[RMDB]
RNA sequence: GGGAACGACUCGAGUAGAGUCGAAAAGUGGACAGAUUCGUCUGUCCACCUCGAUGUGAGGGCGACUUCGGUCCUCCCUCACCGCUCCAUGUGCGAAAUGAGGCGCUGCAUGUGGCAGUCUGCCUUUCUUUUCCGUGUGCGUAUUUCGAUACGCACAGAAACGUCUGUCAUUCGUGACAGACGUUUCAAAAGAAACAACAACAACAAC
Reactivity to 2A3 in 0.01 (KOAc 150mM, MgCl2 10mM, bicine 150mM(pH8.5), 24C), signal-to-noise 3, nucleotides 027 to 156: g000u000g010g010a010c010a000g020a030u020u230c220g060u040c090u000g010u000c000c000a000c000c010u000c020g080a100u260g010u000g000a000g000g030g000c010g010a010c010u030u050c210g110g000u000c010c050u110c000c010c000u000c000a000c000c030g010c010u020c020c040a180u180g080u070g080c100g030a010a060a110u110g010a030g040g010c010g000c030u010g000c030a060u230g050u200g300g000c000a010g010u050c130u170g020c000c000u000u050u050c060u010u040u020u010c020c050g060u030g000u000g020c000g000u000a000u000u130u090c080g050a000u000a000c000g000c000a010c000a000
Reactivity to DMS in 0.01 (KOAc 150mM, MgCl2 10mM, bicine 150mM(pH8.5), 24C), signal-to-noise 2, nucleotides 027 to 156: g000u000g000g000a010c040a020g000a060u000u010c300g020u000c000u010g040u000c000c000a000c000c000u020c050g030a230u000g040u000g000a060g000g000g030c300g000a020c030u020u010c120g010g010u000c020c070u040c010c000c000u000c000a000c000c030g000c050u000c010c000a070u010g030u030g030c010g020a030a090a050u000g010a070g000g000c010g000c010u000g090c010a120u010g010u020g050g020c010a020g010u000c040u000g020c050c030u000u000u000c030u000u000u000u000c020c050g000u000g020u000g000c000g000u010a000u000u000u000c200g040a070u000a010c000g020c000a000c000a040